[RMDB]
Chemical mapping of a 177-nucleotide RNA with DMS. The RNA was probed in 150 mM KOAc, 10 mM MgCl2 and 150 mM bicine (pH 8.5) at 24 C.
RNA sequence: GGGAACGACUCGAGUAGAGUCGAAAAGAUAUGGACGAACUAAAUGUAUACGUGCACAGCGUUUGACGCUAAUCGGAAACGAUUAGCCGAGCUGUGACCCACGAUACAUUUAGUUCGUCCUAAGUCACGUUAAGCAUUGGUUCGCCAAUGCUUAACGAAAAGAAACAACAACAACAAC
Reactivity to DMS in 0.01 (KOAc 150mM, MgCl2 10mM, bicine 150mM(pH8.5), 24C), signal-to-noise 3, nucleotides 027 to 126: g020a050u000a300u010g000g000a030c000g010a000a020c000u010a010a010a000u000g010u000a020u000a090c000g060u000g020c190a000c000a000g010c000g000u000u020u010g040a170c300g070c000u010a000a000u000c020g000g000a120a080a150c030g000a000u000u000a000g000c010c010g010a050g010c000u010g000u000g000a070c270c200c060a020c020g030a040u000a020c000a010u010u010u000a000g000u010u010c000g020u000c000c000u010a010a070g010u010c030a300